[RMDB]
RNA sequence: GGGAACGACUCGAGUAGAGUCGAAAACAAAACAGUGAAAAAAGUGAGAAUCUCGUCCGUUACACUACAUUCCAUCAACUCGGAUCCUCGAACACUCAAAAAAUCACUGGAAGAGCUGCUCACGUCACUAUCCAUCCUACUUCGGUAGGAUGGAUAGAAAAGAAACAACAACAACAAC
Reactivity to 2A3 in 0.01 (KOAc 150mM, MgCl2 10mM, bicine 150mM(pH8.5), 24C), signal-to-noise 2, nucleotides 027 to 126: c010a000a090a010a000c040a010g050u060g080a120a010a000a000a030a080g050u010g020a030g030a040a080u040c030u010c080g050u000c000c000g030u040u070a040c070a030c070u120a050c030a120u120u070c010c000a040u040c040a090a080c070u000c060g050g000a050u040c010c010u040c030g040a060a010c070a010c050u110c050a040a070a010a010a010a060u070c010a010c030u030g030g000a030a010g050a010g040c040u070g000c000u030c000a040c020g050u030c030a010
Reactivity to DMS in 0.01 (KOAc 150mM, MgCl2 10mM, bicine 150mM(pH8.5), 24C), signal-to-noise 2, nucleotides 027 to 126: c070a120a150a110a150c140a080g000u020g000a000a050a060a070a110a110g000u010g010a070g000a080a130u010c070u000c050g000u010c000c040g000u000u000a030c070a110c070u000a140c200a080u000u010c010c010a070u010c070a050a080c080u010c080g000g020a130u010c050c000u000c070g000a040a080c120a080c000u010c010a000a030a040a120a050a080u020c030a030c000u000g020g020a120a020g010a020g020c110u000g000c010u000c030a040c040g020u000c100a050
The record gives the reactivity of an RNA of 177 nucleotides to 2A3 and DMS. Reactivities are given for positions 27 through 126. It was measured as part of the RMDB library OK2TST. The reactions ran in a buffer of 150 mM KOAc, 10 mM MgCl2 and 150 mM bicine (pH 8.5), at 24 C.